Notes
The record gives the reactivity of an RNA of 177 nucleotides to 2A3 and DMS. Conditions: 150 mM KOAc, 10 mM MgCl2 and 150 mM bicine (pH 8.5), 24 C. 2A3 adducts were read by reverse transcription with SuperScript II with manganese. Values cover nucleotides 27 to 126. The 2A3 profile rests on 3,788 reads.
[RMDB]
RNA sequence: GGGAACGACUCGAGUAGAGUCGAAAAGAUAUGGAUGGAACUACACCUUCUCACAUGCGUUCGCGAAGAACUUAAUCGGAAACGAUUAAGGGAGCGAACGCAUGUGACUAGGUGCCAUCCUAAGUCACGUAAGGACAUGGUUCGCCAUGUCCUUACGAAAAGAAACAACAACAACAAC
Reactivity to 2A3 in 0.01 (KOAc 150mM, MgCl2 10mM, bicine 150mM(pH8.5), 24C), signal-to-noise 1, nucleotides 027 to 126: g050a020u090a020u200g020g000a000u020g020g000a030a090c100u230a060c300a010c020c000u010u080c000u000c040a010c000a010u010g010c010g010u000u020c010g000c010g260a300a060g010a100a000c000u010u010a000a010u000c000g050g000a130a070a040c040g000a030u000u010a000a000g000g000g000a010g000c020g000a080a000c000g000c010a000u020g000u000g000a000c000u000a000g020g020u000g030c000c010a010u030c000c000u000a140a000g050u020c040a000
Reactivity to DMS in 0.01 (KOAc 150mM, MgCl2 10mM, bicine 150mM(pH8.5), 24C), signal-to-noise 2, nucleotides 027 to 126: g000a070u010a300u000g000g000a010u000g000g020a120a010c120u040a300c000a020c000c010u000u010c080u000c000a020c020a030u010g010c000g000u000u000c010g000c000g020a070a140g010a080a140c010u000u000a010a010u010c000g010g000a120a090a290c000g000a020u000u000a020a030g000g010g000a130g000c010g010a000a020c000g010c010a010u000g030u000g000a000c010u000a000g010g030u000g020c000c010a000u000c000c030u020a010a160g010u000c060a270